[RMDB]
RNA sequence: GGGAACGACUCGAGUAGAGUCGAAAAGAUAUGGAUUAUAGGGAGGAAUUGGCGAUCGGAAACGAUCGAACUACUUGAUUCCGAAGAACUAUAAUCCUAAGUCAAAAGCCUCAGUUCGCUGAGGCAACACAAUGUCUAACUUCGGUUAGACAUUGUGAAAAGAAACAACAACAACAAC
Reactivity to DMS in 0.01 (KOAc 150mM, MgCl2 10mM, bicine 150mM(pH8.5), 24C), signal-to-noise 4, nucleotides 027 to 126: g010a010u010a260u010g000g000a000u000u000a000u000a010g010g010g000a040g010g000a020a080u010u000g010g030c030g000a000u000c010g010g000a040a040a130c000g010a000u000c010g010a050a070c110u010a110c210u010u020g000a070u020u010c000c000g010a090a110g000a110a150c000u000a000u000a010a000u000c000c000u000a000a120g000u000c010a100a080a150a160g010c000c000u000c000a010g000u000u020c240g010c000u000g000a010g000g020c010a040a050
Reactivity to 2A3 in 0.01 (KOAc 150mM, MgCl2 10mM, bicine 150mM(pH8.5), 24C), signal-to-noise 3, nucleotides 027 to 126: g020a000u040a020u070g000g000a000u010u000a010u010a020g000g010g010a020g030g030a030a110u110u060g090g070c040g010a000u000c010g000g020a020a010a030c000g010a000u000c010g030a070a040c020u150a040c050u110u290g120a100u190u000c010c010g070a110a020g000a000a010c000u000a000u000a000a000u000c000c000u010a050a000g020u000c010a080a030a110a080g000c000c000u000c010a030g000u050u130c250g000c150u010g010a000g000g000c010a000a000
Conditions: 150 mM KOAc, 10 mM MgCl2 and 150 mM bicine (pH 8.5), 24 C.
Chemical mapping of a 177-nucleotide RNA with DMS and 2A3.
For DMS, 4,016 sequencing reads were counted.
Reactivities are given for positions 27 through 126.
Source: RMDB library TTRDEL, as collected in RNAgym.
2A3 adducts were read by reverse transcription with SuperScript II with manganese.